This 177-nucleotide RNA was probed chemically with 2A3 and DMS.
Conditions: 150 mM KOAc, 10 mM MgCl2 and 150 mM bicine (pH 8.5), 24 C.
Reactivities are given for positions 27 through 126.

RNA sequence: GGGAACGACUCGAGUAGAGUCGAAAAACAUUAACUCCGAUUGCGGUGAUACCUUGUCGUGCAUUAACCACAAGUGCGUGGAUCCAUGUGCCGGAGCGAUCUGUGGAAUUAAUGCCAUCUGUAAUGAGUGGUGACUAUGGUUCGCCAUAGUCACCACAAAAGAAACAACAACAACAAC
Reactivity to 2A3 in 0.01 (KOAc 150mM, MgCl2 10mM, bicine 150mM(pH8.5), 24C), signal-to-noise 1, nucleotides 027 to 126: a000c020a050u000u070a000a000c000u000c000c020g170a140u020u130g060c020g080g060u080g010a040u100a150c000c000u060u150g110u070c020g000u040g000c020a030u080u000a070a000c000c000a030c000a090a030g200u200g120c000g010u080g100g000a020u040c080c030a030u040g060u070g140c020c000g030g000a050g040c020g010a030u000c000u020g120u120g010g000a010a030u070u000a030a000u040g120c000c000a090u020c030u040g180u100a100a110u110g060a030
Reactivity to DMS in 0.01 (KOAc 150mM, MgCl2 10mM, bicine 150mM(pH8.5), 24C), signal-to-noise 1, nucleotides 027 to 126: a220c080a060u000u000a140a060c040u000c010c020g010a080u010u010g000c060g000g000u010g010a250u000a060c090c090u000u000g020u020c170g000u010g020c030a020u000u010a080a050c030c040a000c000a060a060g000u050g050c070g020u000g000g020a140u000c100c190a090u000g020u020g020c050c020g020g000a260g010c010g000a020u010c030u010g010u000g020g010a070a040u010u000a020a060u000g010c040c020a050u010c070u000g070u010a110a110u030g000a150